[RMDB]
RNA sequence: GGGAACGACUCGAGUAGAGUCGAAAAAAUCGCUAUCCUCAUGAAUUUUCAGGUGGACAACGCCAACGUAUUGGAAUUGCCCGUGCAUUAGCCGUUGAACCAGAAUUCAUUAUCGCGGACGAACCAAGCUCCGUGGGUAGUUCGCUACCCACGGAGCAAAAGAAACAACAACAACAAC
Reactivity to 2A3 in 0.01 (KOAc 150mM, MgCl2 10mM, bicine 150mM(pH8.5), 24C), signal-to-noise 2, nucleotides 027 to 126: a000a000u090c070g020c000u030a100u280c000c070u180c000a000u010g000a020a030u100u000u210u240c120a220g120g000u080g060g000a110c030a180a000c020g040c020c030a080a030c040g050u120a070u300u300g000g090a150a050u160u230g050c000c000c070g050u020g000c000a000u010u010a020g020c040c060g000u030u040g000a030a000c000c000a000g000a040a030u100u000c020a000u000u130a070u130c200g000c050g000g030a060c070g000a000a040c050c050a060a000
An RNA of 177 nucleotides, treated with 2A3 and read out base by base. For 2A3, 484 sequencing reads were counted. It was measured as part of the RMDB library OK1LIB.